[RMDB]
RNA sequence: GGGAACGACUCGAGUAGAGUCGAAAAGAAACAGGUUCGACAAGGGUGUAAAGAUCGCUCUUUUACUCGGCAUGAUACCACCGUUAUCGGGUCAACAGAGUAGUUGCAAAUGACAACAAUGCUCAGGAAGGGGUAGCACCGUUCGCGGUGCUACCAAGAUUGCAGUGAAGUUCGCUUCACUGCAAUCAAAAGAAACAACAACAACAAC
Reactivity to DMS in 0.01 (KOAc 150mM, MgCl2 10mM, bicine 150mM(pH8.5), 24C), signal-to-noise 1, nucleotides 027 to 156: g010a100a090a130c070a060g000g060u000u000c030g090a070c080a060a030g010g000g020u010g060u010a040a150a090g010a040u000c080g000c030u000c030u000u000u020u000a070c020u010c070g000g000c000a130u000g010a160u000a100c020c010a170c010c000g000u000u010a030u000c180g000g000g020u000c000a100a100c050a150g020a070g010u020a040g040u000u010g020c000a050a080a110u000g010a190c040a030a050c020a060a030u000g010c010u000c010a100g000g000a120a110g020g000g010g020u000a020g000c020a050c000c010g010u000u010c230g070c040g040g000u000g000c000u000a010c020c000a020a070
Reactivity to 2A3 in 0.01 (KOAc 150mM, MgCl2 10mM, bicine 150mM(pH8.5), 24C), signal-to-noise 3, nucleotides 027 to 156: g030a000a080a020c010a060g000g110u140u150c050g030a020c030a040a050g010g070g010u010g030u090a110a140a040g090a090u090c020g020c010u000c020u030u000u040u030a100c070u060c000g000g020c010a010u080g000a000u050a050c020c010a010c020c000g090u060u050a030u100c040g000g000g020u010c000a020a030c080a050g050a000g030u070a000g000u000u010g020c050a080a120a210u200g130a130c000a040a000c000a040a170u100g000c010u000c030a020g030g100a020a050g020g060g030g000u000a000g000c000a020c000c000g010u030u000c120g000c000g060g010u000g020c000u000a000c000c010a000a010

Overview
Structure probing data (DMS and 2A3) for a 207-nucleotide construct. It was measured as part of the RMDB library M2RFPK. For DMS the reverse transcriptase was MarathonRT.